RNA sequence: GGGAACGACUCGAGUAGAGUCGAAAAAUCUGAGGGCGCUAUCAUGCAAACUAGGAUUGUCUGCUCAUGCACAGAACCAACUACCGAUAACUAACAGUGCAUGAAGGUUAGUUAUUCCAUAUUAAUUAAAACUCGUAAUUCUUCGGAAUUACGAGAAUCAUCGCGCUAUGUUCGCAUAGCGCGAUGAAAAAGAAACAACAACAACAAC
Reactivity to 2A3 in 0.01 (KOAc 150mM, MgCl2 10mM, bicine 150mM(pH8.5), 24C), signal-to-noise 1, nucleotides 027 to 156: a010u000c020u010g000a090g000g010g010c020g000c010u030a050u300c050a090u300g010c000a000a000a080c010u020a060g020g000a040u130u000g060u030c010u030g030c000u020c010a000u010g000c050a010c000a040g040a040a070c000c010a080a070c020u150a090c120c030g050a050u000a010a000c000u040a040a000c010a000g050u010g010c010a000u000g000a010a030g080g020u000u010a000g000u000u020a000u080u170c040c020a030u060a100u300u150a150a050u090u150a070a050a070a070c000u000c000g000u000a000a000u010u000c000u000u000c140g010g000a000a000u000u000a000c000g000a020g000a000a010